[RMDB]
RNA sequence: GGGAACGACUCGAGUAGAGUCGAAAAGAUAUGGAGAUCCCAGCAAGUCGGGUCGGAAACGACCUAAUGAUGACCUGGAUCUCCUAAGUCAACCAAGAGCUCAAGACUUCGGUCUUGAGCUCUUGAACAACUAUUUGACGUUCGCGUCAAAUAGUUGAAAAGAAACAACAACAACAAC
Reactivity to 2A3 in 0.01 (KOAc 150mM, MgCl2 10mM, bicine 150mM(pH8.5), 24C), signal-to-noise 2, nucleotides 027 to 126: g010a020u030a010u060g000g000a020g000a010u130c150c040c000a020g040c020a050a020g020u020c040g010g030g000u010c020g000g000a040a070a040c010g010a000c010c010u030a050a080u220g010a010u050g020a020c000c010u010g000g000a000u010c000u000c000c000u010a020a030g010u020c020a000a040c020c000a020a000g010a000g020c000u020c020a010a000g010a020c010u060u180c300g010g030u020c010u000u000g000a000g000c000u000c000u000u010g010a010a010
Reactivity to DMS in 0.01 (KOAc 150mM, MgCl2 10mM, bicine 150mM(pH8.5), 24C), signal-to-noise 4, nucleotides 027 to 126: g000a030u000a280u010g020g000a010g000a010u000c140c020c020a010g000c010a020a300g000u000c010g010g000g010u000c000g010g020a070a110a180c010g010a010c000c000u000a060a050u010g020a030u010g000a300c300c000u000g010g000a040u000c000u000c010c000u010a010a030g010u000c040a240a160c150c000a000a000g000a010g000c000u000c000a000a000g000a030c000u000u020c260g040g010u000c010u000u000g000a000g000c000u000c000u000u000g000a090a220